Source information
This 177-nucleotide RNA was probed chemically with DMS and 2A3. In probing experiments dimethyl sulfate is read out at A N1 and C N3, which are open when not base-paired. The data come from the RNA Mapping Database (RMDB), libraries RFM100 and RFMREP. For 2A3 the reverse transcriptase was SuperScript II with manganese. DMS adducts were read by reverse transcription with MarathonRT.
RNA sequence: GGGAACGACUCGAGUAGAGUCGAAAAUAGUCCCGUACGUUCGCAAUAAGGGAUGCCUGCCUCGGAAAGAGGCAGGUCGCAGUGACUCGGACGCUCCAACUGUCUAGUAACAACAUAGGUGACCGCAAUGAAGGGAAAAGUUCGCUUUUCCCUUCAUAAAAGAAACAACAACAACAAC
Reactivity to DMS in 0.01 (KOAc 150mM, MgCl2 10mM, bicine 150mM(pH8.5), 24C), signal-to-noise 7, nucleotides 027 to 126: u040a110g020u000c010c000c000g010u020a070c100g010u000u030c080g010c070a070a080u020a100a150g010g010g000a070u020g000c000c000u000g000c000c010u010c000g000g010a090a110a150g010a000g010g000c000a000g000g030u000c070g000c070a130g020u030g000a060c020u000c030g000g000a080c070g010c040u000c040c030a060a110c100u010g000u010c020u020a080g010u010a050a060c130a070a080c120a060u010a050g010g010u010g000a150c030c030g010c210a130
Reactivity to 2A3 in 0.01 (KOAc 150mM, MgCl2 10mM, bicine 150mM(pH8.5), 24C), signal-to-noise 6, nucleotides 027 to 126: u140a010g070u020c000c000c000g010u060a020c050g030u030u090c070g000c080a050a100u060a210a060g020g020g030a030u080g010c000c000u000g000c000c000u010c010g070g120a300a150a080g000a030g000g000c000a000g000g000u000c000g000c000a050g020u020g050a030c010u000c040g010g010a010c010g000c050u020c010c010a080a070c040u030g020u030c000u030a040g050u070a090a070c070a030a000c010a080u100a060g000g050u020g070a050c010c020g020c040a040